Chemical mapping of a 170-nucleotide RNA with 2A3 and DMS. DMS adducts were read by reverse transcription with MarathonRT. In probing experiments dimethyl sulfate is read out at A N1 and C N3, which are open when not base-paired. For DMS, 6,878 sequencing reads were counted. Source: RMDB library 15KLIB, as collected in RNAgym. The reactions ran in a buffer of 150 mM KOAc, 10 mM MgCl2 and 150 mM bicine (pH 8.5), at 24 C.
[RMDB]
RNA sequence: GGGAACGACUCGAGUAGAGUCGAAAAGCUCUGCCAUUAAUAGACCACAACUCACAUUUGUGAAGAAUUUUAUUACUGCCAAUCCGGCAUGGAGUAAGGCAGUCUUUAUUUCGCCUUACAAUUCACAGCAGUGCACGGUUCGCCGUGCACAAAAGAAACAACAACAACAAC
Reactivity to 2A3 in 0.01 (KOAc 150mM, MgCl2 10mM, bicine 150mM(pH8.5), 24C), signal-to-noise 5, nucleotides 027 to 129: g040c020u020c010u100g040c020c000a050u060u090a060a040u030a110g080a030c020c000a050c010a050a050c010u050c000a060c010a220u030u110u100g040u050g020a010a040g020a060a020u030u050u060u020a070u110u110a100c050u020g000c000c000a030a080u070c050c060g030g030c020a030u110g030g020a070g030u050a020a050g020g000c000a000g020u030c020u090u150u100a190u030u150u040c040g020c000c000u020u010a010c050a030a130u030u070c050a040c010a030g080c010a000
Reactivity to DMS in 0.01 (KOAc 150mM, MgCl2 10mM, bicine 150mM(pH8.5), 24C), signal-to-noise 2, nucleotides 027 to 129: g040c050u020c040u010g020c090c050a080u030u040a060a120u030a060g020a090c000c040a060c130a140a060c150u050c050a010c080a000u000u000u000g000u040g000a100a040g020a000a000u000u040u030u030a040u020u090a040c030u020g000c040c010a100a070u000c110c050g000g050c030a050u030g000g010a140g050u030a000a010g000g050c000a120g000u030c080u000u000u000a000u030u050u040c100g020c030c040u000u000a020c070a040a070u040u030c040a060c060a050g050c000a000